RNA sequence: GGGAACGACUCGAGUAGAGUCGAAAAGAUAUGGAUGUAGAUCUCCCAACAGCCUAAUUCGGAAACGAAUUAGGACAUGGGAAAUCUGACAUCCUAAGUCAAACCGAACUACUUCGGUAGUUCGGAACGUCUUAUUUAUGUUCGCAUAAAUAAGACGAAAAGAAACAACAACAACAAC
Reactivity to DMS in 0.01 (KOAc 150mM, MgCl2 10mM, bicine 150mM(pH8.5), 24C), signal-to-noise 8, nucleotides 027 to 126: g000a050u010a300u010g000g010a010u010g010u000a020g000a010u000c040u000c000c010c000a050a090c300a220g000c010c000u000a000a010u000u010c000g010g000a130a110a230c010g010a010a000u000u000a010g000g000a010c070a110u000g000g020g010a010a010a000u000c000u010g010a020c010a000u000c000c000u010a020a090g010u010c040a120a140a210c010c000g000a010a010c000u000a000c000u000u020c220g020g010u000a000g010u000u000c000g010g000a020a040
Reactivity to 2A3 in 0.01 (KOAc 150mM, MgCl2 10mM, bicine 150mM(pH8.5), 24C), signal-to-noise 6, nucleotides 027 to 126: g040a010u090a040u200g000g000a000u010g000u010a010g000a020u000c000u000c060c010c000a070a070c110a090g070c000c010u010a010a000u010u000c010g020g020a040a070a060c010g010a010a000u010u000a010g000g020a010c010a030u020g000g000g000a010a020a010u000c010u030g050a020c000a000u000c000c000u010a100a010g040u010c060a070a050a160c000c000g010a000a000c000u010a000c010u050u070c260g170g000u010a000g000u000u010c000g000g000a010a020
Overview: Source: RMDB library TTRDES, as collected in RNAgym. The record gives the reactivity of an RNA of 177 nucleotides to DMS and 2A3. For DMS the reverse transcriptase was MarathonRT. The reactions ran in a buffer of 150 mM KOAc, 10 mM MgCl2 and 150 mM bicine (pH 8.5), at 24 C. Values cover nucleotides 27 to 126.